[RMDB]
RNA sequence: GGGAACGACUCGAGUAGAGUCGAAAAGCGGAAACACGCGGUGGUGUCAAUGGGGUAAGAACAUCAUUCAUCCCUGUAUUGAGUGUUGCUAUUCGGAGUCCUGCAGCAGCAUCGGGGUCACUCCGUCCAAAAACCGCUCGCUGUGAGUCAACAAGACGUCUAGGCAUGUAUUCGUACAUGCCUAGACAAAAGAAACAACAACAACAAC
Reactivity to DMS in 0.01 (KOAc 150mM, MgCl2 10mM, bicine 150mM(pH8.5), 24C), signal-to-noise 1, nucleotides 027 to 156: g070c040g000g000a190a130a100c130a110c070g010c110g040g080u000g000g080u000g000u000c050a130a170u000g000g000g010g000u000a040a170g000a010a020c010a030u000c040a170u000u010c040a110u010c040c000c040u010g040u000a170u000u030g010a080g010u000g000u000u020g040c000u010a290u000u010c060g000g000a240g040u030c010c040u000g000c120a270g010c050a030g000c000a060u000c050g050g090g040g050u010c060a040c070u000c030c040g010u010c070c080a040a070a090a170a070c010c010g040c040u000c090g030c010u010g000u000g000a180g040u010c030a100a100c020a080a130g000a060c080
Reactivity to 2A3 in 0.01 (KOAc 150mM, MgCl2 10mM, bicine 150mM(pH8.5), 24C), signal-to-noise 1, nucleotides 027 to 156: g020c010g090g000a070a080a000c070a040c080g020c010g000g020u050g040g050u010g010u020c050a050a110u150g000g000g030g120u030a030a040g030a090a020c020a040u070c030a000u040u130c000a030u050c010c030c030u010g050u000a060u050u120g060a100g030u030g030u040u070g050c070u080a100u130u030c020g020g000a020g040u000c000c020u040g010c030a050g000c000a000g100c010a060u040c050g020g000g000g030u090c020a040c030u000c010c000g000u110c030c000a000a180a050a050a000c020c030g020c000u020c020g040c000u050g070u110g060a010g030u020c040a000a050c000a140a030g000a030c060